[RMDB]
RNA sequence: GGGAACGACUCGAGUAGAGUCGAAAAGAUAUGGAGACCCGAAGGCUGAUGACCUAAUCUUAGGGUGGGCUCGGAAACGAGCCGUAACAUCCCUAAGAUUAGCAAGGCUUAAGGGUCUCCUAAGUCACACAAGGUAUUAGUUCGCUAAUACCUUGUGAAAAGAAACAACAACAACAAC
Reactivity to DMS in 0.01 (KOAc 150mM, MgCl2 10mM, bicine 150mM(pH8.5), 24C), signal-to-noise 7, nucleotides 027 to 126: g010a030u000a300u000g010g010a030g020a020c000c000c000g000a300a130g010g000c010u010g000a080u010g010a130c300c000u000a010a000u000c000u000u000a010g010g010g020u010g010g010g010c000u000c000g000g000a090a080a160c000g010a020g020c000c000g010u000a040a100c170a060u010c010c000c000u000a010a000g000a010u000u000a000g000c030a070a100g010g020c000u000u000a050a300g010g000g000u000c010u000c010c000u010a000a060g010u010c030a300